RNA sequence: GGGAACGACUCGAGUAGAGUCGAAAACAAUGUGAUGAAAAUAGCAGACUUUGGACUCGCCAGAGAUAUCAACAAUAUAGACUAUUACAAAAAGACCACCAAUGUAAGUCGAUGGCAGUAACACAGUGGGCAGGGGCGGGGGUGAGGCUCAGAAUGAUACCUAAUGAUUAUUCGUAAUCAUUAGGUAAAAAGAAACAACAACAACAAC
Reactivity to 2A3 in 0.01 (KOAc 150mM, MgCl2 10mM, bicine 150mM(pH8.5), 24C), signal-to-noise 3, nucleotides 027 to 156: c080a050a100u120g020u080g040a100u040g050a080a050a100a110u080a060g000c040a040g040a050c050u040u060u110g010g030a040c010u030c070g050c010c020a020g010a000g040a070u090a050u180c080a060a060c040a120a020u160a030u070a220g050a020c000u000a060u210u140a070c080a000a120a000a010a020g050a040c060c000a030c030c040a060a040u080g020u050a060a090g030u000c010g010a020u070g000g000c000a000g010u010a060a000c030a000c020a030g050u030g070g010g000c060a060g020g000g030g040c120g000g020g000g000g050u060g020a050g010g030c030u000c030a030g110a120a060u120g040a000
Reactivity to DMS in 0.01 (KOAc 150mM, MgCl2 10mM, bicine 150mM(pH8.5), 24C), signal-to-noise 2, nucleotides 027 to 156: c020a130a130u010g030u000g000a160u010g010a180a110a040a100u000a060g080c000a070g030a090c060u000u010u010g040g010a100c040u000c050g020c040c010a100g010a100g020a100u000a140u000c010a050a070c040a000a090u000a150u000a130g010a110c040u000a090u000u000a190c050a020a080a080a140a220g010a070c010c010a060c000c010a030a170u000g000u010a000a090g000u010c020g000a070u010g020g000c010a140g000u000a020a150c050a100c070a080g010u010g040g030g000c060a090g000g000g010g060c050g010g000g060g010g010u000g040a030g030g040c110u000c010a050g000a020a070u010g020a220